[RMDB]
RNA sequence: GGGAACGACUCGAGUAGAGUCGAAAAAGUUAGGUUCGCUAUGGUGCAACUCUUUAAGGCAAUAACGAACUAAUUCUAAGCAAGUAAUGGAGAAAUGCAAGGGUCACUAUCUAGCCAUAAUAGUGCUGUAAGUGACUUAGAUUCGUCUAAGUCACAAUAUCAUAAGAGGAUUCGUCCUCUUAUGAUAAAAAGAAACAACAACAACAAC
Reactivity to 2A3 in 0.01 (KOAc 150mM, MgCl2 10mM, bicine 150mM(pH8.5), 24C), signal-to-noise 9, nucleotides 027 to 156: a000g070u070u060a050g040g060u030u010c020g010c020u030a040u070g120g070u080g060c050a110a200c060u100c080u160u220u220a120a050g040g000c020a030a030u050a080a030c030g010a000a000c010u030a000a010u100u070c040u090a040a010g030c030a030a050g050u110a070a080u100g050g010a040g030a050a060a020u070g020c050a050a060g030g010g020u070c010a000c040u030a040u080c010u030a020g030c000c010a020u030a110a030u040a080g090u040g020c050u040g050u130a200a080g000u010g000a000c000u000u000a000g000a000u020u030c110g010u000c170u000a000a000g000u000c000a000c000a010a010
Reactivity to DMS in 0.01 (KOAc 150mM, MgCl2 10mM, bicine 150mM(pH8.5), 24C), signal-to-noise 6, nucleotides 027 to 156: a080g020u010u000a090g030g010u000u000c010g020c020u000a050u000g010g000u000g000c020a100a120c100u000c100u000u000u000a080a100g010g020c020a120a050u000a030a030c020g010a020a040c010u000a040a070u000u000c030u000a080a130g010c040a070a100g000u000a070a090u010g000g010a100g010a080a080a080u000g010c050a060a080g010g020g020u000c020a060c030u000a030u000c030u000a090g030c050c060a060u000a060a090u000a080g020u010g020c030u000g020u000a050a130g030u000g010a020c000u000u000a010g010a070u000u000c300g020u000c000u010a010a020g010u000c000a010c000a040a110
About this RNA:
Source: RMDB library M2RFPK, as collected in RNAgym. Chemical mapping of a 207-nucleotide RNA with 2A3 and DMS. For 2A3, 10,677 sequencing reads were counted.